[RMDB]
RNA sequence: GGGAACGACUCGAGUAGAGUCGAAAAGGGUGGUGGUGAUGGUGCACAACAAUGUGAAUACACUUAAUGCCACUGACUUGUACAUUUAAAAGUAGGUUAAAAUGGGCCAGGCAUGGUGGCUCACACCUGUAAUCCCAGCACUUUGGGAGGCCGAGGACAGUAUAUAAAUCUUCGGAUUUAUAUACUGAAAAGAAACAACAACAACAAC
Reactivity to DMS in 0.01 (KOAc 150mM, MgCl2 10mM, bicine 150mM(pH8.5), 24C), signal-to-noise 3, nucleotides 027 to 156: g020g000g030u020g010g020u010g000g050u000g020a180u000g010g040u010g030c010a100c080a100a140c080a100a130u000g040u010g040a160a170u000a080c030a030c000u000u020a080a220u000g000c020c020a050c010u000g020a090c030u000u000g010u000a080c080a080u010u000u020a040a060a060a160g040u000a060g000g020u000u000a040a030a030a090u000g010g030g020c040c020a050g030g010c060a030u000g030g040u000g020g000c030u000c030a030c060a010c020c000u010g010u010a090a100u000c010c000c010a080g020c100a070c100u000u000u000g020g020g010a060g010g020c030c020g000a070g020g010a210
Reactivity to 2A3 in 0.01 (KOAc 150mM, MgCl2 10mM, bicine 150mM(pH8.5), 24C), signal-to-noise 4, nucleotides 027 to 156: g030g010g020u030g010g030u030g000g030u060g030a080u130g020g010u030g020c020a000c010a120a100c070a120a210u210g010u040g020a070a050u180a100c000a000c010u060u090a060a050u180g010c010c010a010c010u020g040a020c010u030u060g020u060a030c020a130u100u170u210a080a180a040a070g090u110a060g030g070u050u100a040a030a060a080u100g010g020g000c020c010a010g030g070c030a040u140g050g000u010g000g050c010u030c020a020c000a000c000c010u020g030u070a020a020u020c000c000c000a010g040c060a070c110u140u140u020g000g010g020a000g030g000c040c010g020a020g000g050a010

Record summary
Structure probing data (DMS and 2A3) for a 207-nucleotide construct. For 2A3 the reverse transcriptase was SuperScript II with manganese. Conditions: 150 mM KOAc, 10 mM MgCl2 and 150 mM bicine (pH 8.5), 24 C. It was measured as part of the RMDB library OK3TST.